This 177-nucleotide RNA was probed chemically with 2A3 and DMS. For DMS, 3,255 sequencing reads were counted. Reactivities are given for positions 27 through 126. DMS adducts were read by reverse transcription with MarathonRT.
[RMDB]
RNA sequence: GGGAACGACUCGAGUAGAGUCGAAAAUGGGGUUGUUCGCCCAUUAAAGGGGAACGUGAGCUGGGUUUAGACCGUCGUGAGACAGGUUGGUUGCUAUCUAAUGGAUGUGUUAGUAGUCUGAGGGGAAGAAUCGAGAGCUAUUCGUAGCUCUCGAUUCAAAAGAAACAACAACAACAAC
Reactivity to 2A3 in 0.01 (KOAc 150mM, MgCl2 10mM, bicine 150mM(pH8.5), 24C), signal-to-noise 2, nucleotides 027 to 126: u130g000g020g000g000u070u080g030u130u060c090g190c000c000c000a020u070u150a040a030a010g000g010g000g000a010a000c070g000u050g020a020g010c050u050g050g000g000u060u060u120a040g020a030c040c000g050u080c010g030u110g070a090g000a060c040a090g020g000u030u050g060g020u070u050g030c020u000a070u130c010u040a090a010u060g080g050a060u050g110u000g000u110u020a030g000u000a030g020u000c040u050g030a070g000g000g000g000a070a050
Reactivity to DMS in 0.01 (KOAc 150mM, MgCl2 10mM, bicine 150mM(pH8.5), 24C), signal-to-noise 2, nucleotides 027 to 126: u000g020g030g010g000u020u030g000u010u000c070g030c000c010c000a090u030u040a050a100a180g000g000g000g010a030a090c030g020u040g020a120g040c050u040g000g000g000u020u010u010a080g000a040c070c030g070u000c070g010u060g000a110g000a020c110a040g020g020u030u010g030g030u000u000g020c010u010a040u000c030u010a080a040u000g020g030a120u030g020u010g010u000u020a010g040u030a020g000u030c060u020g030a150g000g000g000g020a100a110